[RMDB]
The record gives the reactivity of an RNA of 177 nucleotides to 2A3 and DMS.
RNA sequence: GGGAACGACUCGAGUAGAGUCGAAAAUAUGUUGAUUUGUUAAGGAGAUUCGGAAUGUUCAGUGAAGCUACUCUCCUUAUAAACAUGUCUGGUUCAAAAAAUCUCAAGUACAUUCAUUCAAGUAGUAGAUUACUAAUUAUUUCGAUAAUUAGUAAUCAAAAGAAACAACAACAACAAC
Reactivity to 2A3 in 0.01 (KOAc 150mM, MgCl2 10mM, bicine 150mM(pH8.5), 24C), signal-to-noise 1, nucleotides 027 to 126: u170a060u090g080u030u000g120a150u090u090u050g060u020u000a010a000g040g000a020g010a040u110u070c130g040g050a220a020u100g080u120u040c020a070g110u120g200a080a000g060c060u050a040c000u010c010u030c000c000u000u000a040u010a010a050a000c010a000u030g000u020c050u020g140g000u020u060c000a030a060a000a030a060a200u000c010u000c030a020a120g020u120a070c070a110u020u150c030a050u080u070c030a080a040g050u090a040g010u000a020
Reactivity to DMS in 0.01 (KOAc 150mM, MgCl2 10mM, bicine 150mM(pH8.5), 24C), signal-to-noise 4, nucleotides 027 to 126: u000a050u010g010u000u000g010a140u000u010u010g020u000u010a030a030g000g000a030g010a070u000u000c150g010g000a150a070u020g020u010u000c150a160g000u000g030a130a120g000c090u000a070c090u000c000u000c000c010u000u000a040u000a160a050a050c030a020u000g000u000c060u000g010g000u000u000c080a000a030a140a070a080a060u010c040u000c040a050a090g010u000a030c060a030u000u000c030a080u000u010c110a070a140g010u010a050g010u000a140
The DMS profile rests on 3,013 reads. Conditions: 150 mM KOAc, 10 mM MgCl2 and 150 mM bicine (pH 8.5), 24 C.